[RMDB]
RNA sequence: GGGAACGACUCGAGUAGAGUCGAAAAGAAAGAAAGAAAGAAAUCUUGGAGGCAGGUGCUCACAUGUCCUCCUCCAUGCUUAUAAAUACAUGGAGGAGGCCAUAGUGGCAACUGUCACCAUGAUUAACAACUAGAUUUCUUUCGAGAAAUCUAGUUGAAAAGAAACAACAACAACAAC
Reactivity to DMS in 0.01 (KOAc 150mM, MgCl2 10mM, bicine 150mM(pH8.5), 24C), signal-to-noise 6, nucleotides 027 to 126: g000a100a090a110g010a100a080a070g020a100a090a120g000a110a070a010u010c000u000u000g000g010a060g010g010c010a000g000g000u010g010c000u040c010a000c010a030u000g000u000c000c000u000c000c000u000c000c000a000u000g000c150u010u030a300u030a070a100a080u020a160c000a000u000g000g000a010g000g010a010g010g000c020c000a000u000a090g020u010g000g010c000a000a010c010u000g000u000c010a020c000c000a000u010g000a010u000u020a090a170
Reactivity to 2A3 in 0.01 (KOAc 150mM, MgCl2 10mM, bicine 150mM(pH8.5), 24C), signal-to-noise 9, nucleotides 027 to 126: g060a010a070a010g100a050a070a020g120a040a110a010g110a050a080a000u010c010u030u020g000g000a020g000g010c000a000g000g020u000g010c060u090c190a000c000a000u000g010u010c000c000u000c000c010u000c000c000a000u000g000c010u130u110a100u070a290a190a050u270a040c000a000u000g000g000a000g000g000a000g000g000c000c000a000u020a010g010u000g000g000c000a000a000c000u000g000u010c000a000c000c000a000u020g000a000u030u030a020a020
This 177-nucleotide RNA was probed chemically with DMS and 2A3.
For 2A3 the reverse transcriptase was SuperScript II with manganese.
Source: RMDB libraries RFM100 and RFMREP, as collected in RNAgym.